[RMDB]
RNA sequence: GGGAACGACUCGAGUAGAGUCGAAAAAAUUCAUGAACCAUGUCAGGUCCGGAAGGAAGCAGCAUUAAGUGAAACCUCUCAUGUGCCGCAGGGUUGCCUGGGCCGAGCUAACUGCUUAAGUAACGCUUAGGGUAGCGAAUCGACAGAAGGUGCACGGGCUAUUGUUUAAGUUCGCUUAAACAAUAGCAAAAGAAACAACAACAACAAC
Reactivity to DMS in 0.01 (KOAc 150mM, MgCl2 10mM, bicine 150mM(pH8.5), 24C), signal-to-noise 3, nucleotides 027 to 156: a040a090u010u000c030a100u000g010a070a090c030c000a110u010g020u000c070a130g020g010u000c030c020g020g000a170a090g030g010a050a070g010c030a130g030c030a090u000u000a080a110g020u000g000a100a070a100c040c020u000c030u000c020a090u010g020u000g030c010c040g000c040a110g010g010g000u000u000g000c040c010u010g000g030g030c040c000g000a140g000c050u000a070a110c030u010g000c020u000u000a030a080g020u000a070a140c120g030c050u000u010a070g040g000g020u000a050g020c040g010a100a070u000c000g010a060c030a060g010a070a070g020g010u010g000c040a060c090g000g000
Reactivity to 2A3 in 0.01 (KOAc 150mM, MgCl2 10mM, bicine 150mM(pH8.5), 24C), signal-to-noise 4, nucleotides 027 to 156: a010a000u180u120c080a050u100g030a050a030c060c010a050u060g050u060c030a010g020g020u010c010c040g070g040a050a040g040g010a050a000g000c010a000g000c010a030u110u070a130a030g020u020g060a080a050a050c030c010u050c020u010c050a100u090g050u100g010c020c020g140c070a010g090g000g000u090u120g050c000c010u010g000g000g020c000c010g010a020g000c030u030a040a100c040u080g020c040u130u060a060a010g010u020a100a040c070g010c060u030u050a030g030g020g050u030a010g010c010g050a060a060u080c030g020a020c020a090g040a080a030g020g020u050g040c030a020c030g020g040

Chemical mapping of a 207-nucleotide RNA with DMS and 2A3. Values cover nucleotides 27 to 156.